[RMDB]
RNA sequence: GGGAACGACUCGAGUAGAGUCGAAAAGAUAUGGACCGUCUAAGAUGCAUGGAUCUCUCGGAAACGAGAUCUCCAUGAACUACAUUAUGACGGUCCUAAGUCAAACUUGUGAGUUCGCUCACAAGAACUACAAAGGUGUCUUCGGACACCUUUGUAGAAAAGAAACAACAACAACAAC
Reactivity to DMS in 0.01 (KOAc 150mM, MgCl2 10mM, bicine 150mM(pH8.5), 24C), signal-to-noise 2, nucleotides 027 to 126: g000a050u000a300u010g000g000a040c000c010g000u000c000u010a090a200g030a080u000g000c010a000u000g010g000a020u000c080u000c000u000c000g000g000a050a040a220c010g050a010g000a020u000c110u000c000c000a000u000g000a080a030c080u010a300c060a080u000u000a300u010g000a000c000g000g000u000c000c000u000a000a130g030u010c060a040a080a110c000u000u000g020u000g010a000g030u000u010c200g020c000u010c000a030c010a000a000g010a050a260
Reactivity to 2A3 in 0.01 (KOAc 150mM, MgCl2 10mM, bicine 150mM(pH8.5), 24C), signal-to-noise 1, nucleotides 027 to 126: g050a010u010a010u190g000g000a000c000c000g040u030c000u020a140a100g060a110u080g050c000a010u020g040g000a000u000c020u060c000u020c060g030g010a110a110a040c000g010a000g010a000u030c000u040c000c000a010u020g030a040a020c050u220a030c050a070u000u050a070u240g000a000c000g010g000u000c000c010u000a000a000g000u000c010a000a040a020c000u010u000g010u020g010a010g000u040u300c300g040c150u000c020a010c000a010a000g020a030a040